[RMDB]
RNA sequence: GGGAACGACUCGAGUAGAGUCGAAAAGAUGCUUAGCCAAAUCAGAUAUGUGCUCCAAGAGGCAUUUUUCUGUGGAACCUUGUUCAGCAGAUGGUGUGCCUCUUGUUGUAGUGCGUCUUAGACGAUACUCCGACGUAGAGUUCGCUCUACGUCGGAGAAAAGAAACAACAACAACAAC
Reactivity to 2A3 in 0.01 (KOAc 150mM, MgCl2 10mM, bicine 150mM(pH8.5), 24C), signal-to-noise 2, nucleotides 027 to 126: g040a000u070g010c100u240u150a100g000c030c030a240a030a110u110c020a100g000a100u070a000u220g000u020g040c010u000c010c000a000a000g000a000g000g040c010a040u040u000u000u110u140c000u000g030u060g030g000a000a000c110c200u220u300g040u010u020c000a000g000c020a000g000a020u040g040g280u110g000u000g020c030c000u000c000u000u000g000u000u030g000u060a060g000u010g000c000g000u030c010u040u030a100g000a000c060g020a090u090a110